[RMDB]
RNA sequence: GGGAACGACUCGAGUAGAGUCGAAAAGAUAUGGACCGAGAGCGAUAAGAAGUUAUUUCGGAAACGAAAUACUUCUUUUGACGCUCGGCGUCCUAAGUCAAAAGAACGUAGCUUCGGCUACGUUCAACGUGUCUGACUAGUUCGCUAGUCAGACACGAAAAGAAACAACAACAACAAC
Reactivity to DMS in 0.01 (KOAc 150mM, MgCl2 10mM, bicine 150mM(pH8.5), 24C), signal-to-noise 3, nucleotides 027 to 126: g020a030u010a300u000g010g010a010c020c020g020a210g000a010g020c000g010a150u000a030a010g000a020a020g000u000u010a000u000u000u000c010g010g000a080a030a170c000g020a010a000a010u020a020c000u000u000c000u000u000u010u010g000a160c080g000c000u000c000g010g030c300g000u000c000c020u010a040a110g020u000c000a080a040a070a170g000a010a000c000g020u000a000g000c000u000u010c240g020g000c010u000a000c000g010u010u010c010a020a060
Reactivity to 2A3 in 0.01 (KOAc 150mM, MgCl2 10mM, bicine 150mM(pH8.5), 24C), signal-to-noise 1, nucleotides 027 to 126: g040a000u060a060u080g000g000a000c030c000g050a070g010a020g260c010g000a020u120a270a090g000a020a010g060u290u210a070u040u010u020c000g000g050a070a030a030c000g000a000a000a000u010a000c000u020u020c020u000u030u010u000g040a020c000g000c010u000c000g000g030c180g000u000c000c000u030a140a020g060u000c020a200a050a010a000g010a000a010c000g020u010a000g000c000u060u060c300g150g020c010u000a000c000g010u000u000c000a010a000